[RMDB]
RNA sequence: GGGAACGACUCGAGUAGAGUCGAAAACUGAGUUGCGAAAAGCACCUCGCGGAGUUGAGAGGUGGCCUCCUCGAUCUUGCGGGAAUCGUGGACUCCUAUGAGCGAUCUCACGAGCUCCAUAGCGAUCUUCAAGGAUGAAGCAGCUGCGUUGAUAGAGGCAGACUCUAAAGUUCGCUUUAGAGUCUGCAAAAGAAACAACAACAACAAC
Reactivity to 2A3 in 0.01 (KOAc 150mM, MgCl2 10mM, bicine 150mM(pH8.5), 24C), signal-to-noise 1, nucleotides 027 to 156: c010u000g030a010g020u000u000g000c010g040a130a080a000a030g040c000a000c000c000u000c000g000c020g070g280a200g040u180u090g090a100g000a010g050g030u050g080g100c020c010u000c000c000u030c040g000a030u000c000u120u240g030c000g000g000g010a020a040u050c010g010u010g000g040a020c050u000c060c100u260a300u300g080a110g070c110g060a100u000c110u080c050a000c010g030a000g010c060u000c010c020a090u110a040g000c040g000a020u030c050u150u050c090a040a010g030g010a030u060g060a080a030g000c000a010g030c000u070g030c060g060u070u020g050a090u030a130g090a010g110
Source information:
Structure probing data (2A3) for a 207-nucleotide construct. Values are in units of 0.01, from 0 to 300, in steps of 10. Source: RMDB library OK3TST, as collected in RNAgym. Conditions: 150 mM KOAc, 10 mM MgCl2 and 150 mM bicine (pH 8.5), 24 C. The 2A3 profile rests on 611 reads.